Structure probing data (2A3 and DMS) for a 177-nucleotide construct. For 2A3, 970 sequencing reads were counted. Reactivities are rounded to 0.1 and cut off at 0 and 3. Conditions: 150 mM KOAc, 10 mM MgCl2 and 150 mM bicine (pH 8.5), 24 C. DMS adducts were read by reverse transcription with MarathonRT.
[RMDB]
RNA sequence: GGGAACGACUCGAGUAGAGUCGAAAAACAGCAGACGGGACGUACAUUGAAAGUUGGUGCAACCCACAAUGCGCCCCAAUCUCCGUCUAUCCAAGACGGCAUACAUGUGAAUGUGGAGAAUGCCCCAAUUCUUGUCAGCGUUCGCGCUGACAAGAAUAAAAGAAACAACAACAACAAC
Reactivity to 2A3 in 0.01 (KOAc 150mM, MgCl2 10mM, bicine 150mM(pH8.5), 24C), signal-to-noise 1, nucleotides 027 to 126: a010c060a040g100c020a060g000a040c050g000g020g030a010c020g050u060a040c020a090u050u110g120a230a100a090g120u160u150g200g000u100g000c020a070a040c020c010c000a030c000a000a130u030g040c000g030c000c000c020c030a010a060u040c020u000c000c000g020u000c020u040a150u050c060c020a050a020g010a010c010g000g000c000a100u090a030c040a010u070g070u050g090a180a030u040g020u000g000g020a050g000a090a060u060g000c000c000c000c070a000
Reactivity to DMS in 0.01 (KOAc 150mM, MgCl2 10mM, bicine 150mM(pH8.5), 24C), signal-to-noise 2, nucleotides 027 to 126: a130c080a100g000c100a040g000a120c230g020g010g010a030c170g000u000a050c080a050u000u000g000a130a150a140g000u000u000g070g020u010g010c030a110a160c020c000c020a140c050a080a050u010g010c010g020c020c050c020c020a020a050u000c130u010c010c000g040u000c000u040a070u030c270c150a090a070g000a000c010g020g020c300a040u000a040c200a020u000g010u010g000a230a050u010g020u010g050g010a070g000a100a080u000g010c040c010c000c070a050